[RMDB]
RNA sequence: GGGAACGACUCGAGUAGAGUCGAAAAGCAACAGCCGGGGCCUUGUUGGGGAUCUUGUAUAUUUCUGCAAUUAGGACGGGAGAUGAUAAUCUGUUUAGAUCAGCCAACUCAAUGAUAGCGACCAACCUGUACAGGGGUGUUUCGACACCCCUGUACAAAAAGAAACAACAACAACAAC
Reactivity to 2A3 in 0.01 (KOAc 150mM, MgCl2 10mM, bicine 150mM(pH8.5), 24C), signal-to-noise 2, nucleotides 027 to 126: g050c080a030a150c020a070g040c030c000g000g000g000g000c010c000u030u030g060u040u100g000g000g030g000a010u000c000u060u020g170u010a210u030a000u240u070u060c060u000g080c030a060a170u170u070a040g020g160a000c080g000g010g020a070g040a060u050g000a020u060a220a040u000c000u020g060u080u060u080a060g000a000u030c000a000g060c000c000a000a100c030u000c140a000a110u100g060a100u080a070g000c010g070a020c000c040a040a120c050c050
Reactivity to DMS in 0.01 (KOAc 150mM, MgCl2 10mM, bicine 150mM(pH8.5), 24C), signal-to-noise 1, nucleotides 027 to 126: g010c090a080a120c000a100g000c000c000g010g010g000g030c030c040u000u000g010u060u010g000g000g000g000a050u000c010u010u000g000u010a050u020a080u000u040u020c000u040g020c130a040a080u080u070a070g000g000a070c090g000g040g000a130g000a070u000g030a120u000a080a120u000c030u000g020u000u090u000a110g010a100u000c000a060g020c050c010a020a110c000u070c020a040a090u000g000a020u000a140g050c000g010a100c050c020a090a060c060c000
An RNA of 177 nucleotides, treated with 2A3 and DMS and read out base by base. For DMS the reverse transcriptase was MarathonRT. Conditions: 150 mM KOAc, 10 mM MgCl2 and 150 mM bicine (pH 8.5), 24 C.